[RMDB]
RNA sequence: GGGAACGACUCGAGUAGAGUCGAAAACAUUUUCAGCCGAUACCUGAAUUACGAGUAUGGAGUAGCACUUGCGCACUGUUGGCUGCGAGAGCGGUGCGUAUCUAAUGUGUUUGAGCAUAUUAAUACGCACGGGUUGGUGAUUCGUCACCAACCCGUGAAAAGAAACAACAACAACAAC
Reactivity to DMS in 0.01 (KOAc 150mM, MgCl2 10mM, bicine 150mM(pH8.5), 24C), signal-to-noise 2, nucleotides 027 to 126: c140a160u020u000u000u020c000a070g000c010c010g020a070u040a090c110c000u040g000a120a120u060u040a070c080g000a080g000u000a040u000g010g010a050g010u040a030g020c050a090c090u010u030g000c060g040c070a090c080u020g010u010u020g000g000c020u010g020c050g000a120g000a070g010c060g020g030u000g000c000g020u010a000u000c080u000a000a000u000g000u000g030u000u050u110g010a100g010c010a010u020a010u020u020a000a020u000a010c000g000
Reactivity to 2A3 in 0.01 (KOAc 150mM, MgCl2 10mM, bicine 150mM(pH8.5), 24C), signal-to-noise 3, nucleotides 027 to 126: c020a050u060u080u070u080c020a010g000c010c050g070a030u050a110c010c020u050g080a180a100u190u040a070c140g020a020g080u080a100u190g000g030a040g000u080a020g040c020a070c110u040u120g000c030g070c020a070c090u070g090u150u050g050g000c030u060g000c060g080a120g010a000g010c060g010g000u010g010c000g000u010a010u020c080u070a050a000u030g010u020g060u100u230u300g130a080g010c000a000u020a000u050u060a040a010u050a030c050g030
Description: An RNA of 177 nucleotides, treated with DMS and 2A3 and read out base by base. Source: RMDB library OK1LIB, as collected in RNAgym. The 2A3 profile rests on 1,443 reads. DMS adducts were read by reverse transcription with MarathonRT.